[RMDB]
RNA sequence: GGGAACGACUCGAGUAGAGUCGAAAAAUUUCCUCCUUCUUAGCCAUUCCUUACUUUGAGGAACUCAGGAUGAGGAAAUCCUGCUAGUGUGGAGAGGUUUAAAAUGUGAGUAGCACCCAGCGGCAUCUCUCAGCUGCUGUGUUGUGGCUAUGUAUAAGACGUAUUUACGAUUCGUCGUAAAUACGUCAAAAGAAACAACAACAACAAC
Reactivity to DMS in 0.01 (KOAc 150mM, MgCl2 10mM, bicine 150mM(pH8.5), 24C), signal-to-noise 1, nucleotides 027 to 156: a110u010u010u000c000c020u000c000c060u000u000c030u000u000a060g050c020c050a300u000u000c010c000u010u000a150c180u010u000u030g020a030g060g070a060a140c020u000c050a040g030g020a020u000g000a030g010g000a060a050a070u000c030c030u000g050c040u010a080g030u010g030u000g030g010a160g000a090g050g030u000u000u000a050a060a080a080u000g010u050g000a160g010u010a110g000c050a100c080c030c020a040g010c000g020g010c010a060u000c030u010c050u020c020a130g000c000u000g020c010u000g000u000g030u000u010g050u010g020g010c060u000a060u000g020u000a070u020a070a280
Reactivity to 2A3 in 0.01 (KOAc 150mM, MgCl2 10mM, bicine 150mM(pH8.5), 24C), signal-to-noise 3, nucleotides 027 to 156: a000u000u000u010c000c010u000c000c010u000u000c000u020u040a020g030c050c050a200u050u050c010c000u100u100a260c050u260u180u300g020a000g000g010a020a010c000u000c040a010g010g000a020u020g000a010g030g000a000a020a000u000c000c000u050g000c050u060a100g030u050g040u070g120g020a070g000a040g090g020u070u120u130a050a090a030a020u210g080u040g070a060g030u030a010g000c000a010c010c000c000a000g000c000g000g000c020a090u040c110u070c040u030c150a040g020c010u040g010c000u000g070u040g020u080u120g030u050g060g000c010u020a030u060g130u060a060u020a180a070
About this RNA: This 207-nucleotide RNA was probed chemically with DMS and 2A3. As a SHAPE reagent, 2A3 marks flexible, mostly unpaired nucleotides at the ribose 2'-OH. For 2A3 the reverse transcriptase was SuperScript II with manganese. The reactions ran in a buffer of 150 mM KOAc, 10 mM MgCl2 and 150 mM bicine (pH 8.5), at 24 C. Reactivities are given for positions 27 through 156.